[RMDB]
RNA sequence: GGGAACGACUCGAGUAGAGUCGAAAAUCAGCUGAAAACCAUCAUGCACACCAACAUGCCCAACGUGAACGAGUUCAUGUACAGCAACAAGUUCAAGGCGCGGGUGAUGGUCUCCCGCAAGACCCCCAACGGGGUGACAGUGACAGAUGGUAGUCAGUCUUAUGUGUUACUUCGGUAACACAUAAGAAAAAGAAACAACAACAACAAC
Reactivity to DMS in 0.01 (KOAc 150mM, MgCl2 10mM, bicine 150mM(pH8.5), 24C), signal-to-noise 2, nucleotides 027 to 156: u000c050a060g010c000u020g010a100a080a090a050c000c000a010u000c020a150u010g050c020a190c060a130c030c030a040a080c030a100u000g020c010c010c030a080a060c030g020u000g030a020a060c030g030a290g000u000u010c020a100u010g010u010a120c170a250g000c100a030a060c000a040a270g010u000u000c010a070a110g020g030c110g030c100g000g000g020u000g000a070u010g010g010u000c030u000c000c000c000g060c010a000a030g000a300c010c000c000c040c040a030a170c140g020g000g000g000u000g020a010c030a100g000u010g030a120c050a030g010a050u000g010g010u000a060g010u000c040a050g020
Reactivity to 2A3 in 0.01 (KOAc 150mM, MgCl2 10mM, bicine 150mM(pH8.5), 24C), signal-to-noise 3, nucleotides 027 to 156: u080c000a000g060c010u020g020a000a030a040a040c020c000a000u000c040a070u070g070c030a000c000a000c070c080a100a070c010a140u180g000c030c010c010a050a060c070g100u050g010a000a000c030g020a020g010u030u030c060a080u160g070u300a160c050a100g050c010a020a010c010a050a030g000u010u000c040a030a050g070g000c060g020c090g010g020g020u070g030a010u040g090g000u000c020u010c000c010c000g020c010a030a040g190a150c000c000c000c030c000a030a010c010g000g000g030g010u050g010a040c050a020g010u010g020a030c000a000g010a000u020g000g010u000a020g090u010c000a000g000